RNA sequence: GGGAACGACUCGAGUAGAGUCGAAAAGAAACGCAAGGCCGCUGACCGACGGGAUAUUGUGGGGCUUACCACAGGGGACGCGGCGUGAUCACUUGCCUUUUAAGCCGACCGUCUGGGCUGCAUACAAACCACCCAACUAUCUUCGGAUAGUUGGGAAGUCGUGUUAUAAGUUCGCUUAUAACACGACAAAAGAAACAACAACAACAAC
Reactivity to 2A3 in 0.01 (KOAc 150mM, MgCl2 10mM, bicine 150mM(pH8.5), 24C), signal-to-noise 3, nucleotides 027 to 156: g010a010a070a000c100g020c020a010a000g090g010c010c010g030c040u050g060a060c000c010g030a020c010g070g030g030a120u070a130u260u110g000u020g000g020g060g130c080u110u110a080c000c000a010c010a010g000g000g000g030a010c040g000c000g010g000c000g020u030g000a050u050c020a000c120u000u020g010c000c010u040u090u030u050a060a020g020c000c010g050a120c000c030g020u040c030u040g050g000g000c010u040g010c010a040u100a130c070a020a100a020c000c020a040c010c010c000a000a000c000u000a000u010c010u020u020c060g060g000a000u000a000g000u000u000g000g000g010a000a000
Reactivity to DMS in 0.01 (KOAc 150mM, MgCl2 10mM, bicine 150mM(pH8.5), 24C), signal-to-noise 2, nucleotides 027 to 156: g000a050a060a080c080g000c000a010a090g050g010c020c030g020c010u030g000a170c040c010g020a200c030g000g000g000a090u000a080u010u000g020u000g010g010g010g030c110u000u000a070c010c040a030c060a070g020g000g000g030a270c200g010c030g020g000c050g050u010g000a120u000c080a190c060u000u010g000c030c040u010u000u000u000a050a110g020c010c020g000a090c000c030g030u000c040u000g030g030g000c050u000g000c050a070u000a120c110a070a110a100c050c020a130c000c010c000a010a020c000u000a010u000c000u000u010c300g020g010a020u000a000g020u000u000g000g000g000a000a000